[RMDB]
RNA sequence: GGGAACGACUCGAGUAGAGUCGAAAAGCGGAUAGCGAUCGCCCUCGCGCAGAUAAGUGCGCACCGCGCGCCGCGGAUGCACUCGGAACAGGCAUACGCGCUGGUCGCCCUCGCGCACGUAGAACGAAUACCCUGAGUGAUUCGUCACUCAGGGUAUAAAAGAAACAACAACAACAAC
Reactivity to 2A3 in 0.01 (KOAc 150mM, MgCl2 10mM, bicine 150mM(pH8.5), 24C), signal-to-noise 3, nucleotides 027 to 126: g000c020g020g070a120u150a050g020c020g030a020u080c060g060c000c030c010u020c010g030c000g000c010a020g070a250u200a300a030g020u000g020c010g000c010a030c000c050g030c000g000c020g000c030c020g000c000g010g010a020u010g000c110a180c270u040c080g100g020a180a000c060a100g010g050c010a000u020a020c060g020c010g000c160u150g050g040u130c020g020c000c000c030u080c070g040c000g010c000a010c020g020u050a040g060a150a020c040g020a030
Reactivity to DMS in 0.01 (KOAc 150mM, MgCl2 10mM, bicine 150mM(pH8.5), 24C), signal-to-noise 5, nucleotides 027 to 126: g010c060g000g010a100u010a110g010c020g020a180u010c130g000c040c020c020u010c040g030c010g030c110a090g010a170u020a090a100g010u000g010c000g010c040a090c050c100g000c050g040c030g000c230c020g010c000g000g000a030u000g000c000a100c010u000c070g010g010a100a100c300a100g000g000c010a030u000a010c020g000c010g000c110u010g010g020u010c030g000c010c030c050u000c100g010c010g010c030a030c010g020u010a080g000a100a100c170g000a150
Conditions: 150 mM KOAc, 10 mM MgCl2 and 150 mM bicine (pH 8.5), 24 C. Structure probing data (2A3 and DMS) for a 177-nucleotide construct. Values are in units of 0.01, from 0 to 300, in steps of 10. The data come from the RNA Mapping Database (RMDB), library OK2TST.